RNA sequence: GGGAACGACUCGAGUAGAGUCGAAAACAAUGAGCAUCGUCAACAGUCUAACAACUCAAUCAUGUUUGACACCAAGCCUACAAAGUGGGAACUGUCUUACAUCUUUGAUAAGAUUGUAGAAGCAGGUGGUUCAGAACCAGGAUUUAUCAAUGCUGAGAUACGUCAAGAAGUUCGCUUCUUGACGUAUAAAAGAAACAACAACAACAAC
Reactivity to DMS in 0.01 (KOAc 150mM, MgCl2 10mM, bicine 150mM(pH8.5), 24C), signal-to-noise 2, nucleotides 027 to 156: c070a070a140u010g000a050g050c030a060u000c050g030u000c040a110a100c050a080g000u000c010u000a120a070c090a110a120c230u020c020a060a020u000c010a050u000g000u000u000u000g010a090c040a070c020c090a080a190g000c000c020u000a100c010a130a110a150g030u010g010g010g000a050a100c090u000g030u010c000u010u000a030c000a030u010c030u000u000u020g000a090u000a120a100g000a110u000u000g020u000a100g020a090a080g010c020a030g000g000u010g010g010u000u000c040a110g010a080a060c020c050a100g030g000a130u000u000u010a090u000c050a040a140u010g020c020u020g000a220g010
Reactivity to 2A3 in 0.01 (KOAc 150mM, MgCl2 10mM, bicine 150mM(pH8.5), 24C), signal-to-noise 5, nucleotides 027 to 156: c030a010a130u110g010a010g050c030a030u050c020g070u050c040a020a010c010a050g030u010c020u100a090a080c060a070a050c060u020c060a040a000u040c020a010u040g010u020u000u010g010a000c000a000c000c070a050a030g030c000c000u050a070c100a150a270a050g030u050g010g020g020a000a040c030u030g010u020c000u000u010a010c000a020u010c020u000u040u050g030a030u070a120a030g010a040u010u080g030u030a050g010a120a020g030c070a040g000g040u030g010g050u090u070c030a020g010a040a040c010c010a030g000g040a050u010u110u060a120u170c090a100a040u100g010c010u020g020a020g000